[RMDB]
RNA sequence: GGGAACGACUCGAGUAGAGUCGAAAAUGAGUACUUUGCAUCCUGUCUGAACUGCUUAAUAUCAGUUGGUUCUCUAUAGAAAUGCAAGUAGUGCCCAUUAACAGGCUGGUAAAUUGCAAUCUCAACACCUCGUUAGUGUUUUCGAACACUAACGAGGAAAAGAAACAACAACAACAAC
Reactivity to DMS in 0.01 (KOAc 150mM, MgCl2 10mM, bicine 150mM(pH8.5), 24C), signal-to-noise 2, nucleotides 027 to 126: u000g000a080g000u000a000c040u040u010u000g000c020a100u000c080c090u000g010u040c270u010g000a070a030c000u000g000c000u000u000a010a140u020a080u010c180a000g020u010u030g040g000u000u000c000u000c010u040a000u020a000g060a010a160a050u000g000c100a000a000g020u020a130g000u030g010c130c010c000a080u060u000a080a030c140a020g000g000c060u000g000g040u010a010a200a100u010u060g000c100a060a060u000c000u000c000a090a060c300a200
Reactivity to 2A3 in 0.01 (KOAc 150mM, MgCl2 10mM, bicine 150mM(pH8.5), 24C), signal-to-noise 4, nucleotides 027 to 126: u050g010a010g030u080a070c060u080u090u010g000c030a050u060c000c020u010g020u040c020u030g040a020a010c000u000g060c030u130u130a170a050u100a190u290c100a040g020u170u160g060g000u040u070c070u010c040u030a080u010a160g030a040a070a000u070g020c040a040a000g000u030a000g000u120g000c000c000c010a000u080u000a150a030c020a070g020g050c030u080g010g120u140a080a120a170u090u060g020c020a030a020u030c010u000c020a040a130c030a060
Overview
The record gives the reactivity of an RNA of 177 nucleotides to DMS and 2A3. Conditions: 150 mM KOAc, 10 mM MgCl2 and 150 mM bicine (pH 8.5), 24 C. The 2A3 profile rests on 2,146 reads. For 2A3 the reverse transcriptase was SuperScript II with manganese. For DMS the reverse transcriptase was MarathonRT.